The record gives the reactivity of an RNA of 177 nucleotides to 2A3 and DMS. For 2A3, 5,086 sequencing reads were counted. For 2A3 the reverse transcriptase was SuperScript II with manganese.

RNA sequence: GGGAACGACUCGAGUAGAGUCGAAAAGAUAUGGAGGGAGCAAUCUCUGCGACGAAGAAAUUCGGAAACGAAUUUCAGAGCAGAUCUUGCGAAGAACUCCUAAGUCAAAGGUUGCUUCGGCAACCAACUAAUUCAACGUGUUCGCACGUUGAAUUAGAAAAGAAACAACAACAACAAC
Reactivity to 2A3 in 0.01 (KOAc 150mM, MgCl2 10mM, bicine 150mM(pH8.5), 24C), signal-to-noise 3, nucleotides 027 to 126: g020a010u060a000u180g020g000a000g030g020g060a140g020c000a040a000u000c030u000c020u040g010c000g300a300c040g020a070a070g000a010a010a000u000u020c000g010g050a010a090a020c000g000a000a000u000u020u010c000a000g020a010g000c010a000g000a020u010c000u010u010g000c030g170a270a070g030a130a080c000u010c000c000u020a090a030g020u010c080a180a080a080g020g000u000u000g010c010u080u140c300g100g000c000a000a000c000c010a000a010
Reactivity to DMS in 0.01 (KOAc 150mM, MgCl2 10mM, bicine 150mM(pH8.5), 24C), signal-to-noise 4, nucleotides 027 to 126: g010a040u000a280u000g010g000a010g000g020g010a150g000c000a010a010u010c160u000c010u000g010c000g000a150c230g000a080a080g000a010a010a010u010u010c000g010g020a090a060a150c000g000a010a000u010u000u000c000a020g010a090g010c000a010g000a010u010c290u010u000g000c000g000a130a110g010a120a160c010u000c000c000u000a050a120g000u000c030a090a090a120g010g020u010u000g000c010u000u010c190g040g010c000a000a000c000c010a020a070